[RMDB]
RNA sequence: GGGAACGACUCGAGUAGAGUCGAAAACUUUGUAAAACUGAUCACAUUCUAAUUUGACAUCUAUGUGUGUGACAUGUCUCAAAUUAAUGCCUGCCUUUCAUGACCACGGUCAAUAAGGGCAAAGCUACAUCAUGUAGUUAUUCGUAACUACAUGAUGAAAAGAAACAACAACAACAAC
Reactivity to DMS in 0.01 (KOAc 150mM, MgCl2 10mM, bicine 150mM(pH8.5), 24C), signal-to-noise 9, nucleotides 027 to 126: c210u000u000u000g010u010a070a070a100a070c050u000g000a160u000c020a030c020a020u000u000c040u010a090a090u000u000u000g010a090c210a070u010c150u010a060u010g010u000g020u000g020u010g010a040c030a030u000g010u000c060u000c040a030a040a060u010u010a050a060u010g010c020c050u000g010c000c000u000u000u010c260a200u000g000a020c010c020a110c300g050g010u000c010a050a140u010a030a020g010g000g000c010a030a070a110g010c060u000a160
Reactivity to 2A3 in 0.01 (KOAc 150mM, MgCl2 10mM, bicine 150mM(pH8.5), 24C), signal-to-noise 9, nucleotides 027 to 126: c010u060u050u110g060u090a030a050a050a060c020u030g060a270u060c000a010c000a020u040u020c050u090a170a150u130u100u220g190a090c060a090u040c070u140a100u210g040u000g010u000g010u000g020a000c010a030u120g030u000c020u000c060a080a130a110u140u150a080a030u090g020c000c010u010g000c000c000u010u010u020c050a020u030g000a000c000c000a050c140g050g000u010c000a010a060u040a020a010g010g000g000c010a030a030a000g010c010u030a030